RNA sequence: GGGAACGACUCGAGUAGAGUCGAAAACAAUGGCCACCAGCUGAUGUUGAUGAGUCUUGUGAUGACAGUGACGAUGAUGAUGACUCCGACCAUGAAGCAGAUGAAGAAUCCUCUGCUGAGCAUGAUGAUGAUCCUGAAAGUGCAUCAACAGAUGAACGGCAUUAAGCAUUUUCGAAUGCUUAAUGCCAAAAGAAACAACAACAACAAC
Reactivity to DMS in 0.01 (KOAc 150mM, MgCl2 10mM, bicine 150mM(pH8.5), 24C), signal-to-noise 2, nucleotides 027 to 156: c030a120a070u010g010g000c030c030a130c060c060a140g030c100u030g050a090u010g020u020u000g020a070u000g010a300g020u000c080u020u020g040u010g020a020u000g010a060c010a060g010u000g030a040c040g000a050u010g020a030u000g010a100u000g000a120c060u000c060c040g020a060c070c030a030u000g010a120a040g030c010a060g030a060u000g010a090a090g010a110a150u000c040c050u000c020u000g000c020u000g000a110g000c040a060u000g010a070u010g010a050u000g020a050u000c060c020u010g030a060a030a120g040u000g010c040a130u000c050a030a070c060a090g000a110u000g000a050a100c130
Reactivity to 2A3 in 0.01 (KOAc 150mM, MgCl2 10mM, bicine 150mM(pH8.5), 24C), signal-to-noise 2, nucleotides 027 to 156: c030a020a090u080g040g000c010c030a060c010c000a030g000c020u050g030a070u030g030u070u030g020a110u080g050a050g060u000c080u200u100g050u070g100a280u040g020a000c030a030g020u000g050a000c050g000a020u010g000a000u010g000a010u010g020a020c000u010c050c070g060a060c000c000a020u020g000a020a040g000c020a030g010a010u030g030a040a080g000a030a110u020c000c040u000c010u060g000c010u000g000a020g030c030a040u020g000a000u000g000a020u030g040a030u030c020c010u030g070a100a130a020g080u090g050c000a040u030c020a030a130c010a060g140a020u150g040a130a030c080
An RNA of 207 nucleotides, treated with DMS and 2A3 and read out base by base. The data come from the RNA Mapping Database (RMDB), library OK3TST. The DMS profile rests on 3,241 reads. In probing experiments dimethyl sulfate is read out at A N1 and C N3, which are open when not base-paired. The reactions ran in a buffer of 150 mM KOAc, 10 mM MgCl2 and 150 mM bicine (pH 8.5), at 24 C. Values cover nucleotides 27 to 156. 2A3 adducts were read by reverse transcription with SuperScript II with manganese.